This 207-nucleotide RNA was probed chemically with DMS and 2A3. DMS adducts were read by reverse transcription with MarathonRT. The reactions ran in a buffer of 150 mM KOAc, 10 mM MgCl2 and 150 mM bicine (pH 8.5), at 24 C. Reactivities are given for positions 27 through 156.
RNA sequence: GGGAACGACUCGAGUAGAGUCGAAAAGAAAGAAAGUACUGAAAGUAUUGUGGGAAAUAAUGUGUAAAUCAUUGACCGUUCCUGCGCUGGUAAGAAUAAAAUUUUAGUCCAGACAACACCAGUAUAACCAAUCUAGUGACCUUCGGGUCACUAGAAACAAAAUAUGACCGUUCGCGGUCAUAUUUUGAAAAGAAACAACAACAACAAC
Reactivity to DMS in 0.01 (KOAc 150mM, MgCl2 10mM, bicine 150mM(pH8.5), 24C), signal-to-noise 1, nucleotides 027 to 156: g020a090a100a100g020a150a130a060g010u000a060c010u030g020a060a050a160g000u000a020u000u010g020u010g000g000g000a090a060a130u000a010a040u020g020u040g010u000a100a180a250u020c010a100u000u000g000a130c040c060g000u000u000c000c030u000g000c120g000c050u010g010g040u010a160a100g000a030a050u010a100a000a070a300u000u020u010u000a190g000u000c000c030a090g000a240c050a070a090c100a030c060c010a020g000u000a100u000a080a070c030c050a090a260u000c000u000a020g020u030g030a000c010c010u000u000c300g000g010g060u000c000a000c000u000a000g000a010a010a040
Reactivity to 2A3 in 0.01 (KOAc 150mM, MgCl2 10mM, bicine 150mM(pH8.5), 24C), signal-to-noise 2, nucleotides 027 to 156: g070a020a120a000g080a060a110a020g010u010a010c030u020g020a040a170a080g040u040a210u280u160g000u030g000g000g000a000a000a050u040a010a040u030g010u000g030u030a010a110a000u120c000a000u020u020g020a040c020c010g060u050u040c030c000u040g000c080g000c000u000g000g030u060a090a040g040a050a000u170a110a100a080a080u040u120u030u060a070g010u010c000c020a000g040a180c020a080a000c010a000c010c010a000g020u030a070u050a090a030c050c030a050a070u030c010u000a000g000u000g000a000c010c000u030u000c200g070g000g000u000c000a000c000u000a000g000a000a010a000
The 2A3 profile rests on 1,006 reads. For DMS, 1,627 sequencing reads were counted.